[RMDB]
An RNA of 177 nucleotides, treated with DMS and 2A3 and read out base by base. For DMS the reverse transcriptase was MarathonRT. 2A3 adducts were read by reverse transcription with SuperScript II with manganese. The RNA was probed in 150 mM KOAc, 10 mM MgCl2 and 150 mM bicine (pH 8.5) at 24 C. The DMS profile rests on 981 reads. It was measured as part of the RMDB library TTRDEL.

RNA sequence: GGGAACGACUCGAGUAGAGUCGAAAAGAUAUGGACGAUCUAUUAGACGAAGAACUCGGAAACGAGGGAGUCUGAAUAGAGUCGUCCUAAGUCAAAAGGUAUUAUCUUGUUCGCAAGAUAAUACCAAGAGACAGAACAGGUUCGCCUGUUCUGUCUCAAAAGAAACAACAACAACAAC
Reactivity to DMS in 0.01 (KOAc 150mM, MgCl2 10mM, bicine 150mM(pH8.5), 24C), signal-to-noise 1, nucleotides 027 to 126: g030a010u010a300u020g000g010a000c000g000a100u000c000u000a010u000u000a030g020a030c000g030a130a140g020a200a120c020u010c000g010g010a180a110a120c000g000a000g000g010g000a080g010u000c000u000g010a000a020u010a010g020a050g000u000c000g030u000c000c000u000a030a050g010u000c030a060a050a130a090g030g000u000a000u010u000a010u000c000u000u000g030u000u000c300g010c000a010a020g000a000u000a000a010u000a000c010c000a000a000
Reactivity to 2A3 in 0.01 (KOAc 150mM, MgCl2 10mM, bicine 150mM(pH8.5), 24C), signal-to-noise 1, nucleotides 027 to 126: g000a000u130a060u190g000g000a000c000g000a000u000c000u000a000u030u040a020g000a000c030g110a300a120g020a100a050c000u010c040g000g050a090a040a050c000g000a000g000g000g000a040g020u070c050u040g110a000a000u010a020g070a020g140u110c000g030u000c000c000u020a050a020g080u060c040a080a050a010a110g010g000u000a000u000u000a010u000c010u040u000g030u090u080c300g000c140a000a000g000a010u000a000a000u010a010c000c000a030a010